[RMDB]
RNA sequence: GGGAACGACUCGAGUAGAGUCGAAAAAGCAGUUGGUACAGUUCCAACUGACGGUAGUUAGGAGCCAGGUCGAGCAGCUUACUGAGCCACACGUAGUCUUCGGACACGUCAAUCAUCUCCUGAUCAUUGUCUCGAUCCACAUGACACCGGACCAGACCAGUUAUUCUAGCUUCGGCUAGAAUAACUGAAAAGAAACAACAACAACAAC
Reactivity to 2A3 in 0.01 (KOAc 150mM, MgCl2 10mM, bicine 150mM(pH8.5), 24C), signal-to-noise 4, nucleotides 027 to 156: a000g060c010a000g000u010u020g020g020u130a210c120a250g070u200u050c010c000a000a000c000u010g010a010c000g000g030u090a130g030u060u040a050g000g120a040g080c090c080a040g030g000u010c000g010a010g010c020a010g000c040u030u110a070c040u150g020a020g050c070c030a100c000a000c070g060u080a130g000u080c000u050u060c200g040g000a010c000a000c010g030u020c040a050a120u070c000a060u010c020u040c070c040u060g040a070u050c060a080u040u160g050u080c010u000c020g020a030u030c030c020a090c020a070u120g020a010c000a000c040c000g060g000a050c030c040a010g050a070c050
Reactivity to DMS in 0.01 (KOAc 150mM, MgCl2 10mM, bicine 150mM(pH8.5), 24C), signal-to-noise 2, nucleotides 027 to 156: a060g000c000a040g010u010u010g010g020u000a090c110a180g000u010u010c000c000a030a040c010u000g010a060c110g000g000u000a060g010u000u020a090g020g020a170g020c020c060a120g040g030u000c000g000a050g010c040a140g030c060u010u000a120c070u000g000a110g010c020c040a120c110a040c030g020u000a100g010u010c010u030u030c270g040g000a040c010a050c020g030u010c030a060a140u000c090a080u010c010u000c040c030u010g000a100u000c060a110u010u000g000u010c010u010c030g000a050u000c000c040a130c070a060u000g010a060c030a110c010c010g000g000a090c050c010a070g000a140c110